[RMDB]
RNA sequence: GGGAACGACUCGAGUAGAGUCGAAAAUCCUAGAAGUGGGCGUGCCUGGCAGAAGGAGUAGGUCGAAAACUGGUUGCUGAAGCAGCAUAAGCUCCCUGAUGUAAGCUCCCUGAAUAAAUUCACAGCACCUGUCUAGCUAUUUCGAUAGCUAGACAGGAAAAGAAACAACAACAACAAC
Reactivity to 2A3 in 0.01 (KOAc 150mM, MgCl2 10mM, bicine 150mM(pH8.5), 24C), signal-to-noise 4, nucleotides 027 to 126: u030c000c000u000a030g060a150a010g070u100g020g000g010c060g040u040g010c020c030u030g070g000c030a030g010a120a030g010g030a070g080u060a030g060g080u080c090g050a010a020a060a070c010u030g040g070u080u040g000c010u040g030a090a060g050c030a000g000c020a050u030a130a010g000c000u000c000c000c000u020g050a060u100g060u100a040a000g000c000u000c000c000c030u030g030a000a020u140a140a110a120u120u050c030a020c010a090g040c000a050
Reactivity to DMS in 0.01 (KOAc 150mM, MgCl2 10mM, bicine 150mM(pH8.5), 24C), signal-to-noise 4, nucleotides 027 to 126: u010c000c000u000a070g030a090a110g020u020g010g000g050c090g000u010g000c030c030u000g040g010c050a030g030a210a120g000g000a060g020u000a090g020g010u060c050g010a060a060a050a130c050u010g000g020u000u000g000c010u020g000a120a110g000c060a080g000c050a070u050a120a120g010c060u000c020c010c030u000g000a090u000g020u020a100a160g020c040u010c000c010c000u000g000a090a100u040a030a020a110u010u010c040a070c170a090g000c160a140